[RMDB]
RNA sequence: GGGAACGACUCGAGUAGAGUCGAAAAACGCAAAAAAAGAGGAAGCGAAAGCCCAAUUCAACUCAGCUCCUUUUCCAGCACCAAUAAACCCAACAACAAACGCCCGAGUACCUUUCGCCCUUGAGAAACGCAUCAAGCCAAACUAAGCACCUUUGCCGAAAUAGCUAAGAUUCGUCUUAGCUAUUUCAAAAGAAACAACAACAACAAC
Reactivity to DMS in 0.01 (KOAc 150mM, MgCl2 10mM, bicine 150mM(pH8.5), 24C), signal-to-noise 1, nucleotides 027 to 156: a100c070g000c040a030a000a050a120a020a070a110g010a150g000g010a020a090g060c070g040a080a090a130g000c010c170c000a050a120u000u010c020a040a080c050u010c030a300g000c050u010c000c020u000u000u000u000c020c010a120g050c000a080c050c030a000a100u000a020a050a070c020c000c000a060a090c070a070a070c050a050a060a220c050g110c010c000c030g020a060g040u010a060c030c010u000u010u000c020g000c030c020c010u010u000g010a110g000a030a070a070c020g070c030a070u020c020a020a130g000c030c050a080a040a070c050u000a040a120g020c030a080c080c030u000u000u000g010c060c050
Reactivity to 2A3 in 0.01 (KOAc 150mM, MgCl2 10mM, bicine 150mM(pH8.5), 24C), signal-to-noise 3, nucleotides 027 to 156: a000c050g010c040a100a100a020a030a000a010a010g060a030g050g010a140a020g030c010g030a040a040a010g030c010c020c000a000a020u120u090c010a020a030c020u000c030a020g030c020u030c010c000u020u070u060u000c030c030a020g030c050a050c030c030a040a010u080a120a050a040c040c030c010a000a040c020a040a030c030a030a220a060c070g050c020c010c020g030a010g040u090a070c040c000u010u070u060c020g010c000c010c000u020u030g030a040g050a080a070a010c030g010c040a030u060c070a080a000g070c020c000a070a030a070c070u100a080a020g040c040a020c080c010u050u140u080g090c150c060